[RMDB]
RNA sequence: GGGAACGACUCGAGUAGAGUCGAAAAUACAAAAUCGCACCACCAAAGAAGCAAGUGUGGGCUGUGCGCAAAACCAAUGAAGGAUUCAAAUUUAGCGCACAUCAGUACGACGUGACUAAGAUCACUAGUUCACCAUACGGUUCGCCGUAUGGUGAACAAAAGAAACAACAACAACAAC
Reactivity to 2A3 in 0.01 (KOAc 150mM, MgCl2 10mM, bicine 150mM(pH8.5), 24C), signal-to-noise 3, nucleotides 027 to 126: u150a020c050a000a130a010a100u210c080g020c020a130c020c000a010c010c000a040a100a080g180a200a080g130c150a150a040g070u070g000u010g110g030g000c020u000g010u000g010c000g000c000a000a040a000a080c000c070a020a030u280g060a130a120g060g060a090u150u120c060a030a040a030u000u130u110a060g000c000g000c000a000c000a050u110c000a000g110u050a080c120g000a040c040g080u020g040a000c000u080a100a020g060a170u010c020a020c050u030a060
Reactivity to DMS in 0.01 (KOAc 150mM, MgCl2 10mM, bicine 150mM(pH8.5), 24C), signal-to-noise 1, nucleotides 027 to 126: u110a000c170a100a050a150a080u070c080g070c090a070c070c040a010c000c090a040a240a110g040a210a120g010c030a170a130g000u000g030u000g000g030g030c130u000g000u000g000c000g080c000a060a020a150a070c030c060a110a060u000g000a100a060g000g000a000u070u000c230a000a150a130u040u020u000a060g000c020g000c000a000c000a000u060c100a050g110u000a020c110g040a070c070g000u000g000a020c100u000a000a080g000a020u000c040a020c000u000a080
The data come from the RNA Mapping Database (RMDB), library OK1LIB. Structure probing data (2A3 and DMS) for a 177-nucleotide construct. The RNA was probed in 150 mM KOAc, 10 mM MgCl2 and 150 mM bicine (pH 8.5) at 24 C. Reactivities are given for positions 27 through 126.